Structure probing data (DMS and 2A3) for a 177-nucleotide construct. For 2A3 the reverse transcriptase was SuperScript II with manganese. For 2A3, 1,140 sequencing reads were counted. As a SHAPE reagent, 2A3 marks flexible, mostly unpaired nucleotides at the ribose 2'-OH.
RNA sequence: GGGAACGACUCGAGUAGAGUCGAAAAAUGUCUCAGGAAGUGGCUAUUCAGCCAGGACGCCCUUUCCAGAGUUCAAACUGAUUACUUGAAGAAUAAAUGUCCAUAAGCUGCUUUGUCUCACUAUUCAUGAAUGGUGAGUAUUCGUACUCACCAUUCAAAAAGAAACAACAACAACAAC
Reactivity to DMS in 0.01 (KOAc 150mM, MgCl2 10mM, bicine 150mM(pH8.5), 24C), signal-to-noise 3, nucleotides 027 to 126: a110u000g010u000c010u000c010a200g010g020a080a050g030u010g010g010c030u000a160u010u000c090a040g030c020c070a100g000g000a050c080g020c030c020c060u010u000u000c010c020a300g010a050g020u000u010c080a060a080a170c150u010g000a100u000u020a060c040u000u000g010a080a130g020a030a030u010a040a030a070u000g010u000c010c030a070u010a070a130g010c030u000g000c070u010u010u010g010u010c030u000c020a070c130u000a140u010u000c100a120
Reactivity to 2A3 in 0.01 (KOAc 150mM, MgCl2 10mM, bicine 150mM(pH8.5), 24C), signal-to-noise 2, nucleotides 027 to 126: a000u130g050u000c000u010c020a020g070g090a130a070g040u010g040g000c010u020a040u160u060c000a010g040c030c050a010g000g000a010c030g010c010c000c000u020u020u050c020c000a030g010a020g030u040u050c050a060a140a220c110u110g050a140u090u200a050c020u050u050g010a020a030g040a100a000u060a090a060a070u060g030u000c000c000a060u040a100a020g010c000u030g000c040u040u040u060g060u000c040u030c070a030c040u170a290u240u170c110a060